[RMDB]
RNA sequence: GGGAACGACUCGAGUAGAGUCGAAAAGAUUGUCUGGGUGGAAUGGGCCACCAUCUUUAAUUCAGGCAAUUAUUGGUUUCCAGGCUGUCUAACUACGACUAUUUUAAUGGAUACUGUAGGGGCAUACAUUUAACGGAAUAUUCGUAUUCCGUUAAAUAAAAGAAACAACAACAACAAC
Reactivity to DMS in 0.01 (KOAc 150mM, MgCl2 10mM, bicine 150mM(pH8.5), 24C), signal-to-noise 9, nucleotides 027 to 126: g000a020u000u000g020u000c000u000g010g000g040u000g000g000a060a030u010g000g010g020c210c300a100c010c000a010u000c040u000u000u000a100a070u010u010c010a020g000g000c010a010a010u000u000a070u010u000g020g010u000u000u000c000c010a160g010g020c160u000g010u000c020u000a090a150c050u000a030c040g010a060c080u000a030u000u010u000u010a090a110u010g000g010a060u010a050c110u010g010u000a020g010g000g000g000c060a050u000a070c150
Reactivity to 2A3 in 0.01 (KOAc 150mM, MgCl2 10mM, bicine 150mM(pH8.5), 24C), signal-to-noise 8, nucleotides 027 to 126: g010a010u000u020g010u000c000u030g020g010g010u020g010g040a130a080u030g020g010g010c070c040a090c010c010a050u030c040u060u190u110a200a100u060u060c010a010g000g000c000a010a000u040u020a100u070u110g080g010u000u030u000c000c000a010g080g050c050u040g000u020c020u050a160a130c010u020a080c040g050a030c030u020a070u050u180u030u110a200a120u150g050g010a060u060a210c040u140g010u030a010g000g020g020g000c010a030u070a120c040

This 177-nucleotide RNA was probed chemically with DMS and 2A3. Reactivities are rounded to 0.1 and cut off at 0 and 3. High 2A3 reactivity points to a flexible backbone, as in loops and unpaired stretches.